[RMDB]
RNA sequence: GGGAACGACUCGAGUAGAGUCGAAAACUACCUCUUCGGAGGUAGCCAACUGGGGUCAGCAUCGAUCGCUGACCUAGCGAAGAACCUGAAGCCUCCACGGGGGAGCUAGGGCGGGAGCUGACGGAGGCACCCAUUCAUCCUUAGUUCGCUAAGGAAAUCCCUUUAAUAUCUUCGGAUAUUAAAGGGAAAAAGAAACAACAACAACAAC
Reactivity to 2A3 in 0.01 (KOAc 150mM, MgCl2 10mM, bicine 150mM(pH8.5), 24C), signal-to-noise 2, nucleotides 027 to 156: c000u020a010c020c000u010c000u050u120c280g130g000a000g030g000u000a000g050c010c010a100a080c110u140g020g010g110g000u000c020a020g010c030a130u210c080g220a110u130c030g050c050u170g110a110c000c000u000a000g000c000g180a140a260g060a280a110c010c010u030g040a080a020g020c000c000u030c030c020a070c080g000g020g000g000g080a040g010c010u010a020g130g000g000c000g030g030g000a040g000c030u020g010a020c000g020g000a010g000g000c000a060c000c030c010a080u210u230c040a080u020c000c000u000u000a010g020u040u070c180g000c120u010a000a000g020g000a010a060a000
Reactivity to DMS in 0.01 (KOAc 150mM, MgCl2 10mM, bicine 150mM(pH8.5), 24C), signal-to-noise 1, nucleotides 027 to 156: c000u000a000c010c000u010c020u000u000c270g010g010a020g030g040u010a000g020c020c050a190a120c040u000g090g040g000g060u010c030a020g050c030a240u030c120g000a220u020c130g150c020u030g020a060c010c010u000a010g020c000g000a110a180g010a170a220c000c030u080g000a160a250g070c030c000u020c000c020a300c000g010g000g010g040g000a070g020c040u000a090g010g010g000c090g000g010g030a070g030c050u050g010a150c080g020g010a030g140g020c020a030c030c000c010a220u030u000c010a260u000c000c010u020u000a010g000u000u000c260g040c030u000a030a010g020g010a030a040a100

Overview: Source: RMDB library RNAMAK, as collected in RNAgym. Chemical mapping of a 207-nucleotide RNA with 2A3 and DMS. For 2A3, 1,212 sequencing reads were counted. The RNA was probed in 150 mM KOAc, 10 mM MgCl2 and 150 mM bicine (pH 8.5) at 24 C. Reactivities are given for positions 27 through 156.